An RNA of 177 nucleotides, treated with 2A3 and DMS and read out base by base. It was measured as part of the RMDB library RFM100. For 2A3, 822 sequencing reads were counted. 2A3 adducts were read by reverse transcription with SuperScript II with manganese.
[RMDB]
RNA sequence: GGGAACGACUCGAGUAGAGUCGAAAAGUGACUGAAGCCUGCUCGGUAAGAGCAAAUCCCGUAACUGCGAACAACAUCGUACGUUUCUCCCGUCAAGCAGCCCCUGUUGCUGCCUGACCCUAUUAAGAAUCAGGCCGUUAUUCGUAACGGCCUGAUUAAAAGAAACAACAACAACAAC
Reactivity to 2A3 in 0.01 (KOAc 150mM, MgCl2 10mM, bicine 150mM(pH8.5), 24C), signal-to-noise 2, nucleotides 027 to 126: g050u030g030a040c050u080g000a070a020g030c040c010u020g000c030u010c010g000g080u190a060a040g000a020g020c000a000a010a010u020c010c000c000g000u010a040a000c010u010g010c000g020a110a000c070a010a000c020a190u000c010g030u110a050c070g000u000u080u010c090u010c000c020c020g010u000c010a000a030g020c000a020g030c000c000c000c010u200g090u170u060g080c000u000g010c020c000u000g000a000c050c000c000u060a110u090u160a110a080g110
Reactivity to DMS in 0.01 (KOAc 150mM, MgCl2 10mM, bicine 150mM(pH8.5), 24C), signal-to-noise 1, nucleotides 027 to 126: g000u040g000a030c030u020g000a000a200g040c000c030u000g000c040u000c090g000g000u090a120a260g030a120g110c160a000a130a050u020c000c010c010g000u040a050a040c030u000g030c000g000a020a050c170a070a060c160a030u000c000g000u050a060c120g000u030u000u000c090u000c050c040c030g040u010c010a040a030g000c000a000g010c000c040c130c090u010g000u050u000g000c010u000g030c000c000u000g030a060c040c140c110u010a060u030u100a090a150g010